[RMDB]
RNA sequence: GGGAACGACUCGAGUAGAGUCGAAAACGGCAAAAAAGCAAACUUGACCACCAAGGAUAAAGGAGAUCUUAUCCAAGGAUGCAAAAGAUAAUCUCACUUUUGACACCCACUGAUCUCGAACUUAAAGAAAACCGAGACUACUUCGGUAGUCUCGGAAGUGCGAUAAUCUGUUCGCAGAUUAUCGCACAAAAGAAACAACAACAACAAC
Reactivity to 2A3 in 0.01 (KOAc 150mM, MgCl2 10mM, bicine 150mM(pH8.5), 24C), signal-to-noise 3, nucleotides 027 to 156: c030g030g030c050a000a010a030a100a060a000g120c070a100a080a040c080u090u070g090a170c000c010a040c020c000a040a000g010g000a060u080a100a070a020g170g010a020g000a020u000c000u020u010a010u070c070c040a010a030g030g000a010u040g000c010a010a030a010a020g010a040u140a220a190u130c080u040c110a070c040u000u030u030u010g060a080c000a050c010c000c010a050c090u040g020a010u010c000u000c010g010a090a100c080u160u190a120a070a070g060a040a100a020a010c000c000g000a000g000a000c000u000a000c010u010u020c070g030g010u000a000g000u040c000u000c000g000g000a000a000
The record gives the reactivity of an RNA of 207 nucleotides to 2A3. Conditions: 150 mM KOAc, 10 mM MgCl2 and 150 mM bicine (pH 8.5), 24 C. Reactivities are rounded to 0.1 and cut off at 0 and 3. Values cover nucleotides 27 to 156. It was measured as part of the RMDB library M2RFPK.